RNA sequence: GGGAACGACUCGAGUAGAGUCGAAAACUCAUCUUUCACAUUCGGGUUGGAGAAUUUAAACCCUUCGUUCAGACCUUCUUUUACGAAGUCCAGCUGUGUACCGUCCAGAAAUUGCAGGCUCUUGCCGGGCCGAUGCACUAUUCGUAGUGCAUCGGCCAAAAGAAACAACAACAACAAC
Reactivity to 2A3 in 0.01 (KOAc 150mM, MgCl2 10mM, bicine 150mM(pH8.5), 24C), signal-to-noise 1, nucleotides 027 to 126: c000u000c000a000u000c030u000u050u050c050a000c040a160u060u060c100g080g150g000u060u050g090g000a060g160a180a210u230u180u000a240a250a060c000c030c000u000u080c050g040u030u050c000a030g010a100c020c000u010u030c000u030u120u010u110a000c050g040a020a020g040u010c010c010a040g010c050u020g000u000g030u010a020c020c000g010u000c030c000a000g090a010a170a000u170u070g080c030a060g150g000c000u050c000u000u040g000c000c020g000
Annotation
Chemical mapping of a 177-nucleotide RNA with 2A3. Conditions: 150 mM KOAc, 10 mM MgCl2 and 150 mM bicine (pH 8.5), 24 C. Reactivities are given for positions 27 through 126.